[RMDB]
RNA sequence: GGGAACGACUCGAGUAGAGUCGAAAAAUCGCCCUCGACGGUAUGGCCGGGCAGCUCGACGGCGUGACCAUCUACCAGUCCAAUAACGUGCCCAACGUGGGCGGCGAGAAGUACAAGAUCAUGAUGGUCUGAUGUCUCCCUUCGGGGAGACAUCAGAAAAAGAAACAACAACAACAAC
Reactivity to DMS in 0.01 (KOAc 150mM, MgCl2 10mM, bicine 150mM(pH8.5), 24C), signal-to-noise 1, nucleotides 027 to 126: a090u000c030g000c000c000c030u000c130g070a080c070g030g010u000a070u010g010g010c000c030g000g030g050c030a090g010c040u000c030g010a090c220g030g000c070g000u020g000a070c010c010a050u000c020u010a130c050c020a130g020u010c000c060a080a100u000a140a060c030g020u000g000c010c000c000a110a110c070g010u000g020g000g010c170g000g010c060g010a050g020a110a040g010u030a090c150a090a060g000a050u000c130a110u000g000a080u000g020g020